Chemical mapping of a 177-nucleotide RNA with 2A3.
Reactivities are rounded to 0.1 and cut off at 0 and 3.
Conditions: 150 mM KOAc, 10 mM MgCl2 and 150 mM bicine (pH 8.5), 24 C.
[RMDB]
RNA sequence: GGGAACGACUCGAGUAGAGUCGAAAAGGUAUUAUUCGACAGCUUGUAAUAGUAUCCGUAUAUGCCUACCCUACGCAACUGGGCGUACUCCUUGCAAUGGACUUUUUACAGUUCCUACUUAUCCGGUGUUUGCCGGGUAUUUCGAUACCCGGCAAACAAAAGAAACAACAACAACAAC
Reactivity to 2A3 in 0.01 (KOAc 150mM, MgCl2 10mM, bicine 150mM(pH8.5), 24C), signal-to-noise 2, nucleotides 027 to 126: g030g000u010a000u070u000a020u020u080c010g040a050c040a040g060c010u060u030g160u210a060a040u030a180g000u030a090u170c090c010g000u050a050u000a000u050g000c000c010u000a050c000c000c000u050a080c090g000c030a070a000c070u110g040g000g010c000g000u010a010c040u040c000c040u080u180g080c070a020a110u110g030g020a030c030u070u090u010u040u120a060c130a070g000u040u100c010c000u000a090c030u070u020a010u060c000c020g030g010u010